[RMDB]
RNA sequence: GGGAACGACUCGAGUAGAGUCGAAAACACAUGCUCGCGAUCUCUAGCGACAUGGAGGUACGCGACAUGACUAGUGAUCACUAGGACAUGAGUCUAGGCUAGCUGUCACAUGCUAGUGAGGAUCGCACACAAUUACUCCAUUCGUGGAGUAAUUGUGAAAAGAAACAACAACAACAAC
Reactivity to 2A3 in 0.01 (KOAc 150mM, MgCl2 10mM, bicine 150mM(pH8.5), 24C), signal-to-noise 7, nucleotides 027 to 126: c050a010c000a000u030g020c040u010c010g000c000g010a010u010c020u000c010u030a070g100c090g300a140c070a120u100g010g010a010g020g010u100a190c020g000c000g010a000c000a010u020g030a020c060u080a070g020u000g050a040u020c020a010c070u020a030g050g060a030c040a140u300g070a090g080u000c010u030a020g000g060c010u020a010g000c010u040g050u190c030a040c020a130u090g000c000u010a000g010u020g090a070g070g060a010u010c010g000c020a020
Reactivity to DMS in 0.01 (KOAc 150mM, MgCl2 10mM, bicine 150mM(pH8.5), 24C), signal-to-noise 9, nucleotides 027 to 126: c090a270c040a010u000g000c170u000c010g030c000g010a020u000c010u000c010u000a060g010c120g030a140c230a110u010g010g000a010g010g010u000a080c020g020c010g000a050c010a010u000g000a160c110u010a060g020u000g010a060u000c060a200c020u000a040g000g000a080c050a090u010g000a130g010u000c010u000a050g010g000c010u000a010g000c010u000g000u000c280a120c200a090u000g000c010u000a010g010u000g000a200g000g010a020u000c020g010c060a300
An RNA of 177 nucleotides, treated with 2A3 and DMS and read out base by base. Source: RMDB library OK2TRN, as collected in RNAgym. The reactions ran in a buffer of 150 mM KOAc, 10 mM MgCl2 and 150 mM bicine (pH 8.5), at 24 C. The 2A3 profile rests on 17,676 reads. 2A3 adducts were read by reverse transcription with SuperScript II with manganese. Values cover nucleotides 27 to 126.